[RMDB]
RNA sequence: GGGAACGACUCGAGUAGAGUCGAAAAUUGCCAGCAACCAUCAAAGAGUGCAAGAGGUUGUCCAUAGACAAGGCGCCUGCAUGAUGGCUCAGCAGAGCAAAGGCCUGCAGGUCCUCUAACAGGCCAGACUGCGCAAUAUGUUCGCAUAUUGCGCAGUAAAAGAAACAACAACAACAAC
Reactivity to DMS in 0.01 (KOAc 150mM, MgCl2 10mM, bicine 150mM(pH8.5), 24C), signal-to-noise 2, nucleotides 027 to 126: u000u000g010c010c010a280g030c010a110a080c030c020a050u000c020a080a140a140g010a100g010u010g000c040a070a090g010a160g000g020u000u000g020u010c010c160a080u010a150g000a080c070a080a070g000g000c160g020c010c050u000g000c070a070u010g000a010u000g010g000c050u010c080a070g040c050a030g010a090g000c080a050a040a120g000g000c000c000u010g000c090a080g010g000u000c010c020u000c050u000a170a110c020a010g000g000c000c020a300g000
Reactivity to 2A3 in 0.01 (KOAc 150mM, MgCl2 10mM, bicine 150mM(pH8.5), 24C), signal-to-noise 1, nucleotides 027 to 126: u040u030g050c000c000a010g040c000a000a000c040c000a040u000c050a130a100a140g150a100g120u140g070c010a060a050g040a050g140g000u050u120g000u020c020c020a110u130a080g080a030c040a030a020g060g000c030g040c010c000u030g040c010a030u120g030a020u010g010g030c030u030c030a070g040c000a020g020a020g020c020a130a220a000g090g020c000c000u000g020c010a010g020g020u000c000c020u020c000u010a030a030c010a000g000g030c000c000a020g050